Chemical mapping of a 207-nucleotide RNA with 2A3 and DMS. For 2A3, 15,137 sequencing reads were counted. It was measured as part of the RMDB library RNAMAK. Values cover nucleotides 27 to 156. The reactions ran in a buffer of 150 mM KOAc, 10 mM MgCl2 and 150 mM bicine (pH 8.5), at 24 C. For DMS, 5,326 sequencing reads were counted.
[RMDB]
RNA sequence: GGGAACGACUCGAGUAGAGUCGAAAAGACGGUUCGCCGUCCGCUUAUCCUAAGUCCUUUACUCUCCCAUGAUGACCAAAGCGCAAGUCGGAAACGAUGAUGACCGCUUUGCAAGUGGGAUUGUAAAGGAUAUGGAACGGUGGGAGUUCGCUCCCAACUACACAUUAUGCUUCGGCAUAAUGUGUAGAAAAGAAACAACAACAACAAC
Reactivity to 2A3 in 0.01 (KOAc 150mM, MgCl2 10mM, bicine 150mM(pH8.5), 24C), signal-to-noise 8, nucleotides 027 to 156: g040a020c020g030g040u060u070c100g040c140c050g140u050c010c010g030c040u100u120a110u080c010c000u030a090a040g040u010c000c010u010u010u010a010c010u010c000u010c010c000c000a010u030g070a190u070g030a080c060c000a010a000a000g010c010g000c040a140a120g000u000c010g010g040a080a090a060c030g030a030u060g010a020u070g040a070c040c020g000c000u000u000u000g000c010a170a170g000u000g000g000g000a000u000u000g000u000a000a000a000g000g000a000u000a000u010g010g000a010a040c030g030g000u060g040g010g000a030g020u140u150c060g020c030u000c010c000c000a010a010
Reactivity to DMS in 0.01 (KOAc 150mM, MgCl2 10mM, bicine 150mM(pH8.5), 24C), signal-to-noise 2, nucleotides 027 to 156: g000a040c020g000g020u010u010c150g050c030c000g000u000c000c000g030c060u010u000a150u010c000c010u000a080a260g010u000c010c000u000u000u000a000c000u000c060u000c010c000c000a050u010g010a120u010g010a220c300c030a030a020a020g040c000g000c010a070a300g020u000c020g000g020a190a130a220c050g020a070u010g020a110u000g010a160c280c000g000c000u000u000u000g030c010a050a190g000u000g020g010g010a010u000u000g020u000a040a030a010g010g010a010u000a000u010g030g000a060a070c080g020g010u000g000g010g000a030g000u010u000c060g030c010u030c000c000c020a010a100